Chemical mapping of a 177-nucleotide RNA with 2A3 and DMS. The data come from the RNA Mapping Database (RMDB), libraries RFM100 and RFMREP. High 2A3 reactivity points to a flexible backbone, as in loops and unpaired stretches. Values cover nucleotides 27 to 126.

RNA sequence: GGGAACGACUCGAGUAGAGUCGAAAAUGAGACCAGCAGGGGCAUCCGGGCUGGUACCCGGACUAUCUGCGUGAUCCCUGGUGACUUGAUACAGUCGCUGCACACGACUAUUUCAGGAUUGCUCUGGUGAUAUUCUGGUGUUCGCACCAGAAUAUCAAAAAGAAACAACAACAACAAC
Reactivity to 2A3 in 0.01 (KOAc 150mM, MgCl2 10mM, bicine 150mM(pH8.5), 24C), signal-to-noise 5, nucleotides 027 to 126: u220g010a040g040a060c010c000a010g030c000a010g010g020g030g000c040a040u020c000c000g010g020g000c060u180g080g040u090a070c000c000c000g020g000a020c020u130a140u140c020u030g020c010g040u050g010a090u090c010c000c000u020g030g020u020g020a020c000u040u030g020a020u020a050c040a020g000u000c000g000c090u200g050c050a020c020a010c050g040a020c020u030a060u070u060u050c020a020g030g130a190u010u080g010c010u020c030u100g070g000
Reactivity to DMS in 0.01 (KOAc 150mM, MgCl2 10mM, bicine 150mM(pH8.5), 24C), signal-to-noise 5, nucleotides 027 to 126: u010g000a130g000a050c050c020a090g010c010a040g010g000g000g030c220a260u000c020c010g000g000g010c040u030g010g010u010a050c000c010c010g000g000a060c120u010a100u030c020u000g010c010g020u000g000a070u020c010c000c010u000g010g010u000g010a090c010u000u000g000a060u010a080c150a030g010u000c010g020c030u010g020c150a080c220a150c030g000a030c010u000a110u010u000u010c030a020g000g010a130u010u010g010c030u010c060u000g010g020